[RMDB]
RNA sequence: GGGAACGACUCGAGUAGAGUCGAAAAACACUCCUCACUACGGUGAGGAGUGACCGGUGCCUGGCACAUAGGAGUUUCAUAAAUGUAUUUUCAUUAAUUUAUUGAUCUCCAAUGCCUAGCACAGUAACUGCUCUCUGACUUUCGAGUCAGAGAGCAGAAAAGAAACAACAACAACAAC
Reactivity to 2A3 in 0.01 (KOAc 150mM, MgCl2 10mM, bicine 150mM(pH8.5), 24C), signal-to-noise 1, nucleotides 027 to 126: a010c000a000c000u020c000c000u110c050a000c000u030a000c300g050g000u020g000a000g000g000a000g000u000g020a000c030c000g000g000u000g010c000c110u050g000g030c000a050c000a130u090a100g000g000a000g010u030u000u000c000a000u010a000a000a000u050g090u160a130u200u300u010u010c050a030u000u230a030a020u000u000u030a070u000u220g000a000u010c000u000c000c010a000a000u040g000c000c000u000a000g030c000a000c000a000g020u010a140a120